[RMDB]
Structure probing data (2A3) for a 207-nucleotide construct. The reactions ran in a buffer of 150 mM KOAc, 10 mM MgCl2 and 150 mM bicine (pH 8.5), at 24 C. Source: RMDB library RNAMAK, as collected in RNAgym. For 2A3 the reverse transcriptase was SuperScript II with manganese.
RNA sequence: GGGAACGACUCGAGUAGAGUCGAAAAAGCCACUGUUCGCAGUGGCUAAAAAAACCUUUGUGCAUAGCUAGAUCGACAUCACUGUCCCAUUGGGACAGUGAGUGUCAGAUCUUGGACCUAUGCACUCUGGUAAAAAACCUGCCGUUCGCGGCAGGAACGUACAAAGGACGUUCGCGUCCUUUGUACGAAAAGAAACAACAACAACAAC
Reactivity to 2A3 in 0.01 (KOAc 150mM, MgCl2 10mM, bicine 150mM(pH8.5), 24C), signal-to-noise 2, nucleotides 027 to 156: a010g000c010c000a000c020u010g050u050u080c300g000c180a010g000u020g010g000c010u010a020a000a010a000a000a000a010c000c000u030u010u000g010u000g000c000a000u010a000g020c000u020a000g000a000u000c010g000a000c000a010u020c000a000c000u000g010u030c000c020c130a300u160u300g000g000g000a000c000a010g000u020g000a020g000u000g000u000c090a040g000a000u000c000u000u010g020g020a020c000c010u000a000u000g010c000a000c000u000c000u010g000g000u040a190a120a000a000a000a000c010c000u000g000c030c000g030u030u010c290g020c010g140g000c000a000g020g000a000a040